An RNA of 177 nucleotides, treated with 2A3 and DMS and read out base by base. For DMS the reverse transcriptase was MarathonRT.
[RMDB]
RNA sequence: GGGAACGACUCGAGUAGAGUCGAAAACGUGCGAAGCUUGUCGAGUGGUUGCUCGAGCAGGGCAUCACCCCCGACGAGAUUCGGGCGACCAACCCGCCGUUGCUGCUGGCCACCCGCCACCUCGUCGGUCGUCUAAGGUAUUCGUACCUUAGACGACAAAAGAAACAACAACAACAAC
Reactivity to 2A3 in 0.01 (KOAc 150mM, MgCl2 10mM, bicine 150mM(pH8.5), 24C), signal-to-noise 2, nucleotides 027 to 126: c040g000u080g090c030g060a070a050g000c020u060u010g050u090c030g030a030g030u040g030g140u120u190g000c000u020c000g070a130g140c190a110g010g000g000c010a040u080c050a080c000c000c010c040c020g000a040c000g010a010g000a010u020u080c040g040g070g010c000g000a060c010c010a020a090c010c000c020g020c030c020g150u110u150g010c060u060g000c010u010g010g020c000c000a060c030c000c020g000c000c000a020c000c000u050c010g070u010c040g100
Reactivity to DMS in 0.01 (KOAc 150mM, MgCl2 10mM, bicine 150mM(pH8.5), 24C), signal-to-noise 3, nucleotides 027 to 126: c070g050u000g010c010g000a070a040g000c020u000u000g000u000c000g020a040g020u000g050g020u000u000g020c000u000c010g010a130g000c210a170g000g000g020c020a020u000c150a070c020c030c070c050c030g020a020c030g010a010g000a040u000u000c020g010g000g020c020g010a140c030c060a100a080c060c040c030g010c060c120g000u000u000g020c050u000g010c070u000g000g000c040c050a050c060c030c020g010c060c070a080c070c030u000c040g010u010c090g010
The 2A3 profile rests on 2,483 reads. Conditions: 150 mM KOAc, 10 mM MgCl2 and 150 mM bicine (pH 8.5), 24 C.